[RMDB]
RNA sequence: GGGAACGACUCGAGUAGAGUCGAAAAAGGCCGCGGGCCGGCUGUUCUUCUUUCUCUUUCGUCGUCAUCCUUGGCUAGCCUCUGGAGUUCCUCUUCUUCCUCUUGGCUGAGGCGCUUUCCUCCUCCGUAAGCUCCUGGUUCGCCAGGAGCAAAAGAAACAACAACAACAAC
Reactivity to DMS in 0.01 (KOAc 150mM, MgCl2 10mM, bicine 150mM(pH8.5), 24C), signal-to-noise 3, nucleotides 027 to 129: a160g000g000c080c010g050c090g000g000g000c090c040g000g100c080u020g020u030u040c030u020u040c030u040u000u000c030u030c030u030u000u020c040g040u010c100g050u000c010a120u030c050c030u030u040g000g000c080u000a090g010c030c040u050c000u040g000g000a220g000u010u030c030c020u040c050u000u000c030u000u000c040c020u030c050u020u050g000g060c100u030g000a110g030g000c300g010c090u020u030u010c030c000u020c030c020u000c000c000g020u060a070a110
Reactivity to 2A3 in 0.01 (KOAc 150mM, MgCl2 10mM, bicine 150mM(pH8.5), 24C), signal-to-noise 4, nucleotides 027 to 129: a000g050g000c020c010g040c070g020g100g040c050c000g030g000c020u040g060u120u030c020u030u000c000u020u070u020c010u000c000u020u060u050c050g020u000c010g000u020c030a070u060c020c020u050u030g030g000c020u020a030g030c000c000u020c040u040g070g040a050g020u040u040c000c000u020c020u050u010c000u000u000c030c000u020c030u050u050g070g000c070u040g060a020g030g020c050g010c030u020u030u000c000c020u000c000c000u020c000c000g040u040a060a040